An RNA of 207 nucleotides, treated with 2A3 and DMS and read out base by base. Source: RMDB library OK3TST, as collected in RNAgym. The reactions ran in a buffer of 150 mM KOAc, 10 mM MgCl2 and 150 mM bicine (pH 8.5), at 24 C. For 2A3 the reverse transcriptase was SuperScript II with manganese. Reactivities are given for positions 27 through 156.
[RMDB]
RNA sequence: GGGAACGACUCGAGUAGAGUCGAAAACUCCAGCUCUGAUCCUGCCAGCGAGGAGCCUUAGAGCAAGUGACUUAACCUUCUGGGCCUCAGUUUCCCUCAUCUGAAAAUGGGCGUGAUCAAGUCACCUCCCAGGGAUAUUUUCGAGGAUGAGAGGGGACAGCCCAUUAGGAUUCGUCCUAAUGGGCUGAAAAGAAACAACAACAACAAC
Reactivity to 2A3 in 0.01 (KOAc 150mM, MgCl2 10mM, bicine 150mM(pH8.5), 24C), signal-to-noise 1, nucleotides 027 to 156: c010u010c000c010a020g000c000u020c010u040g040a050u080c030c010u050g100c020c000a060g020c050g080a020g030g020a040g040c040c000u060u100a040g010a000g000c070a100a120g060u090g110a030c030u000u160a030a070c010c000u030u030c020u010g030g050g030c020c000u110c020a050g000u020u040u030c000c000c000u020c020a080u000c000u090g050a120a070a030a090u080g000g000g000c030g000u010g020a010u090c160a090a100g220u000c000a040c040c050u240c000c000c000a030g030g030g030a030u050a090u180u140u070u020c070g080a060g010g000a030u030g010a000g020a040g010g020g000g040a020
Reactivity to DMS in 0.01 (KOAc 150mM, MgCl2 10mM, bicine 150mM(pH8.5), 24C), signal-to-noise 1, nucleotides 027 to 156: c010u000c030c020a190g020c050u000c000u050g000a040u000c010c010u010g010c080c140a080g060c090g030a110g000g010a070g040c060c030u000u010a050g000a070g030c040a050a140g050u050g010a060c040u000u150a050a160c020c020u000u000c020u020g020g000g020c050c080u000c020a180g000u000u000u010c000c010c000u000c080a110u000c010u040g000a050a020a030a090u000g000g020g070c300g020u020g010a000u000c080a080a110g050u000c010a000c020c060u000c000c060c030a300g020g010g000a200u010a080u000u000u000u000c040g040a300g050g020a080u000g020a060g000a030g040g000g000g000a090